[RMDB]
RNA sequence: GGGAACGACUCGAGUAGAGUCGAAAAAUGAGACUUCUGACGACGAGUGGGCUGCUGCAGUUGAUGAAGCGUUCCCUCUCGAUGAAGCAGAAGAUGUUACUGAAUCUGUGCAAGAAGAAGCACAACCUACCAUAUCAGUUCGCUGAUAUGAAAAGAAACAACAACAACAAC
Reactivity to 2A3 in 0.01 (KOAc 150mM, MgCl2 10mM, bicine 150mM(pH8.5), 24C), signal-to-noise 9, nucleotides 027 to 129: a010u210g020a040g040a030c000u000u000c010u010g070a090c040g000a010c010g000a000g010u030g000g020g000c050u080g000c010u040g010c040a090g030u240u170g130a220u080g040a080a000g010c010g020u160u160c000c020c000u000c000u000c000g110a130u100g050a070a020g010c010a000g000a010a000g030a020u140g080u140u100a090c050u080g060a040a060u050c050u040g020u010g010c020a050a080g070a080a040g050a080a010g240c010a000c000a020a030c010c010u050a090c030
Reactivity to DMS in 0.01 (KOAc 150mM, MgCl2 10mM, bicine 150mM(pH8.5), 24C), signal-to-noise 9, nucleotides 027 to 129: a070u080g020a100g010a090c010u010u030c000u020g030a070c020g000a130c000g030a010g010u010g010g010g030c300u050g000c010u020g020c040a040g010u040u030g000a170u020g010a060a000g000c010g000u030u030c040c000c020u000c000u020c030g030a060u070g020a160a140g040c000a020g010a000a000g000a070u020g030u000u000a090c100u040g000a050a050u050c070u000g010u030g020c010a070a080g030a080a070g000a120a110g050c060a040c030a050a090c030c010u000a080c110